[RMDB]
RNA sequence: GGGAACGACUCGAGUAGAGUCGAAAAUCAUCUCUAUCAUCAUGAUGACAUUGGGUGUCAUUAUCCUGAUAUCUGCACUGAAAAAAUGGCGUGAGCUGUGGAUUCGUAGAUCAGCUGAGAUGGCUGGUAUAUGACGGCGAUUCGUCGCCGUCAUAUAAAAAGAAACAACAACAACAAC
Reactivity to DMS in 0.01 (KOAc 150mM, MgCl2 10mM, bicine 150mM(pH8.5), 24C), signal-to-noise 2, nucleotides 027 to 126: u010c080a030u010c020u000c010u000a020u000c010a020u000c050a000u000g000a010u000g000a020c020a080u010u020g040g050g030u000g010u000c000a040u000u000a020u000c020c040u030g000a030u000a000u000c090u000g050c120a070c140u010g000a020a000a070a230a120a040u010g030g020c000g020u010g000a190g010c020u010g000u000g010g010a300u010u000c040g020u010a060g000a040u010c020a020g000c020u000g000a010g000a030u010g000g010c030u000g000g010
Reactivity to 2A3 in 0.01 (KOAc 150mM, MgCl2 10mM, bicine 150mM(pH8.5), 24C), signal-to-noise 1, nucleotides 027 to 126: u090c000a030u020c010u030c010u010a040u040c010a010u000c000a020u020g020a000u010g000a050c020a030u060u300g300g050g040u040g050u000c010a020u000u030a010u060c000c000u020g000a020u000a010u100c030u090g040c060a070c190u110g020a000a030a000a000a000a120u040g050g000c040g020u090g040a040g000c000u020g000u020g030g010a040u060u000c020g000u060a020g020a110u020c010a020g000c010u040g000a000g010a070u040g060g020c020u020g070g000